[RMDB]
RNA sequence: GGGAACGACUCGAGUAGAGUCGAAAACUACCUGACUAGAAUUCAGGAUAAGUAAGUUCUUCAUAAGAGAACAUUUCCAUUACGAAUUCAGUCGCAAAUUGUAGAAUUAGCUACUCUACGAUUUAGUCUCACCCAUGGAAUUCGUUCCAUGGGUGAGAAAAGAAACAACAACAACAAC
Reactivity to 2A3 in 0.01 (KOAc 150mM, MgCl2 10mM, bicine 150mM(pH8.5), 24C), signal-to-noise 6, nucleotides 027 to 126: c050u080a090c000c020u010g010a000c000u030a140g000a010a000u000u000c000a020g020g020a040u070a110a030g170u070a100a030g010u000u000c000u070u040c040a120u090a290a040g020a000g000a030a000c010a020u020u050u000c010c010a040u160u160a090c150g010a000a010u000u010c000a000g020u000c010g000c050a010a040a020u030u020g010u010a010g020a040a050u060u030a050g030c030u040a030c020u000c000u010a000c000g000a010u000u040u120a090g040u000
Annotation:
Conditions: 150 mM KOAc, 10 mM MgCl2 and 150 mM bicine (pH 8.5), 24 C. Structure probing data (2A3) for a 177-nucleotide construct. Reactivities are rounded to 0.1 and cut off at 0 and 3. 2A3 adducts were read by reverse transcription with SuperScript II with manganese.